The record gives the reactivity of an RNA of 177 nucleotides to 2A3 and DMS. High 2A3 reactivity points to a flexible backbone, as in loops and unpaired stretches.
RNA sequence: GGGAACGACUCGAGUAGAGUCGAAAACUCUGUGAGAGUCUCACUCUCUGACACACACUGUGACUGAGAGACUGACACUGACAGUGAGUGAGUCUGUGACAGUGAGUCACUCUGUCUGUGACACAGAGAACCGAUCCAAGUUCGCUUGGAUCGGUUCAAAAGAAACAACAACAACAAC
Reactivity to 2A3 in 0.01 (KOAc 150mM, MgCl2 10mM, bicine 150mM(pH8.5), 24C), signal-to-noise 2, nucleotides 027 to 126: c000u000c000u020g000u000g050a120g010a010g020u000c010u000c020a030c010u010c000u010c000u010g070a020c000a010c000a020c030a020c200u200g040u010g030a070c010u030g040a020g010a010g040a080c040u010g000a000c000a000c030u020g020a010c000a040g100u040g120a040g020u080g000a040g110u050c030u020g080u090g080a040c020a090g190u070g120a030g060u000c010a000c020u050c020u010g060u000c040u060g040u030g010a050c020a000c010a070g030a020
Reactivity to DMS in 0.01 (KOAc 150mM, MgCl2 10mM, bicine 150mM(pH8.5), 24C), signal-to-noise 2, nucleotides 027 to 126: c000u000c000u000g010u000g000a300g000a100g000u000c020u000c170a230c010u000c010u010c000u000g000a090c010a000c050a180c150a080c280u000g010u010g000a110c010u000g000a140g000a040g000a220c140u000g000a100c000a070c000u000g000a040c030a070g010u000g020a030g010u000g010a030g000u000c000u000g030u000g020a160c150a140g010u010g010a020g000u000c000a020c000u000c000u000g000u000c030u000g030u000g010a220c070a070c060a030g000a090
For DMS, 985 sequencing reads were counted. Conditions: 150 mM KOAc, 10 mM MgCl2 and 150 mM bicine (pH 8.5), 24 C. Source: RMDB library OK2TRN, as collected in RNAgym. DMS adducts were read by reverse transcription with MarathonRT. The 2A3 profile rests on 2,114 reads.